[RMDB]
RNA sequence: GGGAACGACUCGAGUAGAGUCGAAAAGUGCUGAUCCGAUUGCGGCCGAUCCUCGACGCGGUCAGCGGGCCCGCCUACCUGCGCAACGGGCUGCUCGUGGUCGGGUUGGCGACGCUGCUGGUGGCGGAGCGUUUCGAUCUUUCGAGAUCGAAACGCUAAAAGAAACAACAACAACAAC
Reactivity to 2A3 in 0.01 (KOAc 150mM, MgCl2 10mM, bicine 150mM(pH8.5), 24C), signal-to-noise 3, nucleotides 027 to 126: g180u140g010c010u000g000a040u050c020c020g060a050u000u080g010c010g010g000c000c020g060a160u080c030c030u070c090g060a070c030g000c000g000g010u040c050a020g000c020g010g030g010c090c070c000g020c000c040u060a040c000c020u130g000c020g000c050a040a060c010g010g040g000c050u050g010c070u050c060g030u040g030g010u050c030g000g000g000u010u020g010g000c000g000a000c010g020c040u090g010c040u080g050g060u080g030g000c020g040g060
Reactivity to DMS in 0.01 (KOAc 150mM, MgCl2 10mM, bicine 150mM(pH8.5), 24C), signal-to-noise 1, nucleotides 027 to 126: g000u020g010c050u000g000a000u000c020c050g030a070u040u000g020c000g010g020c000c020g010a110u020c060c040u010c080g080a160c070g000c000g030g000u020c050a010g000c090g000g000g010c070c090c030g000c030c030u020a070c100c070u030g020c080g050c170a130a170c070g020g000g020c040u000g000c000u020c070g020u020g000g000u020c000g000g010g030u000u010g000g020c010g000a050c070g020c040u000g030c020u000g030g000u010g000g050c000g020g000

Chemical mapping of a 177-nucleotide RNA with 2A3 and DMS. Reactivities are given for positions 27 through 126. Source: RMDB library OK1LIB, as collected in RNAgym.